[RMDB]
RNA sequence: GGGAACGACUCGAGUAGAGUCGAAAAAGAUAUGGAUGAGUCCGUACUUGGAUUUAAGUCGACUAUAAGCUCGGAAACGAGCUUACGAAUCGACUUUGUCAGUACAGUUAAAACUCAUCCUAAGUCAUCGUAUAGCUCUGUUCGCAGAGCUAUACGAAAAAGAAACAACAACAACAAC
Reactivity to DMS in 0.01 (KOAc 150mM, MgCl2 10mM, bicine 150mM(pH8.5), 24C), signal-to-noise 2, nucleotides 027 to 126: a050g000a040u010a300u000g000g010a000u000g000a010g010u000c100c130g000u000a000c010u010u000g030g030a030u020u020u010a020a000g000u000c000g020a010c070u000a300u000a010a000g000c000u000c020g000g000a130a120a220c000g000a000g030c000u000u000a000c080g000a030a180u000c000g020a010c000u000u000u010g000u010c020a010g000u000a040c020a130g000u010u010a090a070a100a040c000u000c010a030u010c000c000u000a040a120g000u000c070a160
Reactivity to 2A3 in 0.01 (KOAc 150mM, MgCl2 10mM, bicine 150mM(pH8.5), 24C), signal-to-noise 1, nucleotides 027 to 126: a000g080a000u070a030u100g000g000a020u000g010a000g040u000c180c100g010u000a010c040u050u260g300g010a050u300u300u110a020a000g000u000c000g020a000c030u020a030u000a090a000g000c000u010c080g000g000a140a060a010c000g040a000g000c050u000u000a000c040g060a090a300u020c000g000a020c020u010u000u000g010u040c000a030g000u020a040c050a050g170u250u300a130a160a020a000c020u010c000a020u020c000c000u000a120a020g030u000c040a090
Structure probing data (DMS and 2A3) for a 177-nucleotide construct.
For 2A3 the reverse transcriptase was SuperScript II with manganese.
Reactivities are given for positions 27 through 126.
For 2A3, 1,554 sequencing reads were counted.